[RMDB]
RNA sequence: GGGAACGACUCGAGUAGAGUCGAAAAGCUAGGUUCCAGGUGCUCUUCCUGGCACUGGGGAGGGAUACAGGCCCAAGAGACAUGCUGUUCUCCCUCCUGGAGCAUCUAUUUUAGUGGAGGAAGACAGACUGGUAAUGCUCUUCGGAGCAUUACCAGUAAAAGAAACAACAACAACAAC
Reactivity to 2A3 in 0.01 (KOAc 150mM, MgCl2 10mM, bicine 150mM(pH8.5), 24C), signal-to-noise 1, nucleotides 027 to 126: g010c030u080a090g000g120u080u000c010c010a010g180g020u040g030c020u020c000u040u060c010c030u050g070g040c030a020c030u030g030g010g000g030a030g010g030g020a030u030a100c020a010g040g080c010c010c020a050a000g100a000g020a140c030a070u080g000c000u020g000u110u000c020u000c140c000c000u000c000c030u030g050g020a020g010c060a030u070c040u140a250u080u220u130u150a120g060u110g030g020a030g000g020a010a030g020a030c010a020g090
Reactivity to DMS in 0.01 (KOAc 150mM, MgCl2 10mM, bicine 150mM(pH8.5), 24C), signal-to-noise 1, nucleotides 027 to 126: g010c080u010a110g030g010u000u000c030c040a070g020g010u000g000c090u000c020u010u010c020c010u000g020g030c030a030c040u000g040g020g020g000a010g030g000g010a100u020a050c070a050g010g000c050c040c010a130a100g000a150g000a070c110a080u010g010c000u000g000u000u010c220u010c010c000c000u000c000c000u010g000g000a040g000c040a080u000c100u000a110u000u000u010u030a050g010u000g000g000a040g000g000a050a030g000a050c080a100g050